[RMDB]
RNA sequence: GGGAACGACUCGAGUAGAGUCGAAAACCAAUGGGAAACCAUUGGCAACUCGGAAACGAGUUGAACUGGGAAUUACGUGGUAAACCAGCGACAAUGCGAUUUUAAGCAUUGUCGAUUACGCCCAUGUCGAUUUUAAGACAUGGAGCGAAACCACGAAGCAUCGAGCUGCGUUCGCGCAGUUUGAUGCAAAAGAAACAACAACAACAAC
Reactivity to 2A3 in 0.01 (KOAc 150mM, MgCl2 10mM, bicine 150mM(pH8.5), 24C), signal-to-noise 1, nucleotides 027 to 156: c000c000a000a000u000g000g000g020a030a000a020c000c000a010u000u000g010g010c000a000a000c000u000c000g000g030a050a030a030c000g000a000g000u010u000g000a020a010c010u000g000g000g020a060a040u070u060a070c010g000u010g000g000u010a020a030a040c010c000a000g020c000g000a000c000a000a000u000g000c020g120a120u010u030u110u270a080a020g000c000a000u000u000g000u000c000g000a000u000u010a020c000g020c000c000c000a000u020g000u000c010g040a080u020u090u090u300a160a030g000a000c000a000u000g000g000a260g000c000g000a140a060a000c000c000a010c000g000a040a010
An RNA of 207 nucleotides, treated with 2A3 and read out base by base. The RNA was probed in 150 mM KOAc, 10 mM MgCl2 and 150 mM bicine (pH 8.5) at 24 C. Values are in units of 0.01, from 0 to 300, in steps of 10.